[RMDB]
RNA sequence: GGGAACGACUCGAGUAGAGUCGAAAAUGAAUUGAAUUGUCUUCCAUAGGGACUGCUGAGAUGUCCUCUAUUCUUGAAGAGCGUAUUCUUGGAGCUGAUACCUCUGUUGAUCUUGAAGAAACUGGGCGUAAGAAAUGGUUUUCGAACCAUUUCUUACAAAAGAAACAACAACAACAAC
Reactivity to 2A3 in 0.01 (KOAc 150mM, MgCl2 10mM, bicine 150mM(pH8.5), 24C), signal-to-noise 3, nucleotides 027 to 126: u090g040a020a100u190u070g050a070a080u050u080g040u040c020u080u000c010c030a050u120a060g000g010g030a030c000u030g060c090u090g100a060g010a210u040g030u040c000c000u010c020u050a090u030u060c010u050u120g110a080a050g000a020g020c080g050u050a110u070u090c070u070u090g050g020a010g000c030u000g020a050u040a060c000c010u000c010u060g110u060u080g050a090u050c020u030u130g080a090a060g080a080a070a060c090u060g010g080g040c080
Reactivity to DMS in 0.01 (KOAc 150mM, MgCl2 10mM, bicine 150mM(pH8.5), 24C), signal-to-noise 8, nucleotides 027 to 126: u000g000a100a110u000u000g010a090a100u000u000g010u000c030u000u010c020c190a080u000a110g010g010g000a030c040u000g010c120u010g010a120g010a080u000g000u000c010c000u000c050u000a070u000u000c080u010u010g010a050a040g010a040g010c130g010u000a070u010u000c040u000u000g010g000a080g020c080u010g010a080u000a070c190c010u000c020u000g010u000u000g000a090u000c050u000u010g000a060a080g000a040a070a120c070u000g000g010g020c240